[RMDB]
RNA sequence: GGGAACGACUCGAGUAGAGUCGAAAACAUUUGGAGUGUCAAUUGGGGACAAAGGUGACAAUGUCAAUGUCUUUUCAAUGCUUAAUGUGGUAGAAGACAAAUCUGCAAAAUUAGAUGGAGAAGAAAAGCGACUAAUUAGUUUCGACUAAUUAGUCGCAAAAGAAACAACAACAACAAC
Reactivity to DMS in 0.01 (KOAc 150mM, MgCl2 10mM, bicine 150mM(pH8.5), 24C), signal-to-noise 2, nucleotides 027 to 126: c040a060u010u000u000g060g000a100g020u000g020u000c080a060a070u010u000g020g010g000g010a120c050a030a120a250g030g000u010g010a040c080a040a080u010g010u020c070a080a150u000g000u010c030u000u000u000u000c030a030a090u010g000c050u020u020a050a070u010g000u000g030g040u000a010g010a020a080g010a120c290a070a090a040u000c020u040g000c040a030a080a060a070u000u020a040g000a060u010g000g000a060g010a000a080g030a090a080a110a100
Reactivity to 2A3 in 0.01 (KOAc 150mM, MgCl2 10mM, bicine 150mM(pH8.5), 24C), signal-to-noise 2, nucleotides 027 to 126: c000a050u080u070u130g030g010a060g010u040g030u060c040a050a090u070u060g030g010g000g020a030c090a020a090a030g000g080u070g030a050c030a060a120u150g050u080c010a010a020u050g040u010c000u010u040u030u020c030a080a020u140g020c030u060u110a070a040u250g020u020g090g000u060a020g030a090a010g010a010c000a040a080a030u040c020u050g090c060a050a010a090a150u080u030a020g030a070u100g040g060a040g010a060a030g000a020a080a010a010